[RMDB]
RNA sequence: GGGAACGACUCGAGUAGAGUCGAAAAACCGCCAGCUCGCCGACCACGAGACCCGUCUCGACGCCCUCGAACGCGCCCGCUGGCCCCUCGCGUCCAUCGCCGCCCUGACCGCCCUCGCCGGCGUCGUGGUGGCCCUGUGGCAGCUCGCCACGCGGUAGUGUAUGCCUUAUUUCGAUAAGGCAUACACAAAAGAAACAACAACAACAAC
Reactivity to 2A3 in 0.01 (KOAc 150mM, MgCl2 10mM, bicine 150mM(pH8.5), 24C), signal-to-noise 1, nucleotides 027 to 156: a000c020c050g000c000c000a000g000c010u020c010g030c030c010g100a090c030c070a050c070g010a020g080a100c070c030c020g120u000c020u070c070g120a140c040g020c010c000c000u050c040g080a150a080c020g040c050g000c010c020c070g020c050u010g000g020c000c000c000c040u030c060g010c000g040u040c060c030a120u120c040g000c030c000g000c010c010c000u040g000a040c080c090g000c000c020c020u170c040g140c190c060g040g000c000g000u020c000g040u020g000g040u000g010g000c060c000c030u060g000u050g010g000c010a040g030c040u090c160g060c000c000a030c020g020c030g010g000u090a040